[RMDB]
The record gives the reactivity of an RNA of 177 nucleotides to DMS. Reactivities are given for positions 27 through 126. Conditions: 150 mM KOAc, 10 mM MgCl2 and 150 mM bicine (pH 8.5), 24 C.

RNA sequence: GGGAACGACUCGAGUAGAGUCGAAAAACGAGCUCAAACGGCUCUGGUUCUACCGCAAGCCGGCCUGCGCGGAAAAGGCUUGGGGGCAAUGGUUCGAACAGGCUCAGCAAAGCGGGAUCGCCGCCUAUGAGGACCUAUGAUUCGUCAUAGGUCCUCAAAAAGAAACAACAACAACAAC
Reactivity to DMS in 0.01 (KOAc 150mM, MgCl2 10mM, bicine 150mM(pH8.5), 24C), signal-to-noise 1, nucleotides 027 to 126: a090c170g010a090g020c020u020c090a070a080a170c300g000g020c000u000c020u000g000g010u020u000c070u000a100c020c020g030c000a020a270g000c020c060g050g000c030c010u000g000c300g000c090g000g000a000a030a130a060g000g000c070u000u000g040g000g020g000g010c130a080a090u000g000g010u010u000c040g030a070a040c090a100g000g000c020u000c070a110g010c050a040a100a150g000c030g030g020g000a120u010c180g000c020c030g010c020c010u000a110

The DMS profile rests on 726 reads.